An RNA of 177 nucleotides, treated with DMS and 2A3 and read out base by base.
The 2A3 profile rests on 1,214 reads.
For DMS the reverse transcriptase was MarathonRT.
Values cover nucleotides 27 to 126.
The reactions ran in a buffer of 150 mM KOAc, 10 mM MgCl2 and 150 mM bicine (pH 8.5), at 24 C.
For DMS, 1,070 sequencing reads were counted.
RNA sequence: GGGAACGACUCGAGUAGAGUCGAAAAAGAUAUUGUCGCACGAUACAAGAGAGCUAAAGGAUUUUCAGUUUUACAUCCUAUGGGGUGGGAUAGCUUUGGCCUGCCUGCAGAACAAUAUGCUGUGAGAGUGUAGCAAUGCGUUCGCGCAUUGCUACACAAAAGAAACAACAACAACAAC
Reactivity to DMS in 0.01 (KOAc 150mM, MgCl2 10mM, bicine 150mM(pH8.5), 24C), signal-to-noise 1, nucleotides 027 to 126: a090g020a080u010a000u000u010g000u000c030g030c050a030c120g010a150u000a120c180a110a100g000a130g000a060g000c060u030a030a060a050g010g000a070u000u020u010u000c090a140g020u020u010u000u000a110c050a040u000c010c000u000a100u010g040g030g050g010u020g000g000g000a020u000a060g010c020u000u010u000g000g030c000c000u000g030c030c050u000g100c010a020g010a080a010c060a060a070u000a030u010g010c040u000g000u000g000a140g010a150
Reactivity to 2A3 in 0.01 (KOAc 150mM, MgCl2 10mM, bicine 150mM(pH8.5), 24C), signal-to-noise 1, nucleotides 027 to 126: a010g070a040u070a020u050u030g010u020c030g040c020a040c040g010a020u110a160c040a080a050g040a000g000a000g060c010u070a100a000a040g090g020a140u040u030u080u080c010a040g040u040u000u050u200a040c020a010u010c010c000u040a090u240g130g000g000g010u050g000g080g020a050u110a010g050c000u040u000u020g000g000c000c000u020g020c010c010u060g000c000a000g000a000a000c000a010a010u080a030u160g030c030u010g060u020g020a110g020a010